[RMDB]
Structure probing data (DMS and 2A3) for a 177-nucleotide construct. Source: RMDB library OK2TST, as collected in RNAgym. For DMS the reverse transcriptase was MarathonRT.
RNA sequence: GGGAACGACUCGAGUAGAGUCGAAAAACACUCACACUCCUCCAACUAUUUAUUUCAAUAACAUUCAUGGCAUCUAAUCUGACCCUAAUGUACAUUAUAUUUGAAGCCACCCUUAUUCCAACCCUGAGACAAUCUAGACAUUCGUGUCUAGAUUGUCAAAAGAAACAACAACAACAAC
Reactivity to DMS in 0.01 (KOAc 150mM, MgCl2 10mM, bicine 150mM(pH8.5), 24C), signal-to-noise 1, nucleotides 027 to 126: a080c130a100c110u000c030a030c070a050c030u000c010c000u010c020c030a090a100c070u010a060u000u000u010a030u000u000u010c070a050a040u000a110a090c070a080u010u000c040a000u010g030g010c050a070u010c050u010a080a130u010c060u000g000a130c080c020c040u010a030a030u000g010u000a020c100a030u000u000a050u010a060u020u000u000g020a070a110g000c090c040a070c060c040c010u000u020a090u010u010c040c020a080a130c010c000c010u000g000a220
Reactivity to 2A3 in 0.01 (KOAc 150mM, MgCl2 10mM, bicine 150mM(pH8.5), 24C), signal-to-noise 1, nucleotides 027 to 126: a000c040a010c010u020c010a050c000a020c000u060c000c020u060c000c030a040a000c040u060a080u030u180u040a080u010u110u120c060a130a030u060a080a060c000a000u000u020c010a040u060g000g030c010a000u000c050u030a080a000u020c050u060g160a170c010c020c000u050a110a060u000g040u090a010c040a010u090u110a150u110a060u150u010u080g050a000a000g000c000c030a010c000c000c030u060u110a180u130u020c020c000a010a010c040c040c000u010g020a020